[RMDB]
This 177-nucleotide RNA was probed chemically with 2A3 and DMS. The data come from the RNA Mapping Database (RMDB), library OK2TRN. The reactions ran in a buffer of 150 mM KOAc, 10 mM MgCl2 and 150 mM bicine (pH 8.5), at 24 C. DMS adducts were read by reverse transcription with MarathonRT.
RNA sequence: GGGAACGACUCGAGUAGAGUCGAAAACUGCCUCACUGGAUAACAUUGAUCUCUGCCUAAUUCUUCGCAUCAAUUUGCUCCAGAGAUUUGAUGCUAAAACUCUCGAUGCAGAAGCAAACUAUUAAUACACACCUUUAGUAUUCGUACUAAAGGUGUGAAAAGAAACAACAACAACAAC
Reactivity to 2A3 in 0.01 (KOAc 150mM, MgCl2 10mM, bicine 150mM(pH8.5), 24C), signal-to-noise 6, nucleotides 027 to 126: c000u030g030c000c000u020c010a060c050u050g040g020a070u050a140a030c010a040u030u060g050a070u020c020u000c000u020g020c020c020u100a110a100u130u070c030u120u100c060g020c030a050u030c030a070a160u050u060u090g020c020u030c060c030a030g020a010g010a080u050u040u190g020a020u060g000c060u080a040a060a100a090c030u060c020u030c110g040a040u060g000c010a010g040a120a020g060c020a050a070a040c040u080a070u300u170a120a090u130a080
Reactivity to DMS in 0.01 (KOAc 150mM, MgCl2 10mM, bicine 150mM(pH8.5), 24C), signal-to-noise 5, nucleotides 027 to 126: c040u010g010c030c030u000c020a080c050u000g010g020a090u000a090a090c040a040u000u000g000a040u000c020u000c020u000g010c100c030u010a050a080u010u010c070u000u010c170g030c070a060u000c090a050a050u010u010u010g000c050u000c070c050a030g000a060g000a030u000u010u000g020a040u000g010c030u010a070a050a060a080c070u000c030u000c100g010a080u000g000c030a050g010a090a080g000c110a080a060a110c120u000a090u010u010a080a110u010a250